Chemical mapping of a 177-nucleotide RNA with DMS and 2A3. For 2A3, 9,881 sequencing reads were counted. 2A3 adducts were read by reverse transcription with SuperScript II with manganese.
[RMDB]
RNA sequence: GGGAACGACUCGAGUAGAGUCGAAAACGGGUCCGGUCACCUUGAUCAGCACUUCGUCGGCAGCUGUUUUACCGCUGGUGGUUACGAUAUAGCCGAAAUCGAGUGCCGACUCGCCGCUGCCAACAUAGAUACGGUACAAUUUCGAUUGUACCGUAUCAAAAGAAACAACAACAACAAC
Reactivity to DMS in 0.01 (KOAc 150mM, MgCl2 10mM, bicine 150mM(pH8.5), 24C), signal-to-noise 6, nucleotides 027 to 126: c050g010g010g020u000c060c080g020g010u010c050a040c090c040u000u000g010a080u000c040a090g010c030a120c170u000u000c070g030u000c030g010g010c010a070g010c060u010g030u000u010u010u010a070c100c100g010c070u000g000g020u000g010g020u010u000a040c040g010a060u000a120u010a110g010c030c020g010a030a070a060u000c040g010a060g000u000g000c010c010g000a040c030u000c030g020c040c050g010c080u000g010c020c030a060a060c150a080u010a140
Reactivity to 2A3 in 0.01 (KOAc 150mM, MgCl2 10mM, bicine 150mM(pH8.5), 24C), signal-to-noise 6, nucleotides 027 to 126: c020g000g000g030u070c100c070g000g030u150c040a040c060c060u020u090g030a030u040c000a010g020c010a020c060u080u050c050g050u010c010g030g050c000a020g010c020u050g100u090u140u130u220a050c030c030g040c040u070g040g300u080g020g050u180u070a030c040g000a050u020a020u100a170g040c050c030g020a060a050a040u060c030g010a010g010u030g010c000c000g010a010c010u010c000g020c020c010g000c040u050g070c030c010a050a060c010a110u180a050
Description
2A3 is a SHAPE reagent: it acylates the 2'-hydroxyl of flexible nucleotides of all four kinds.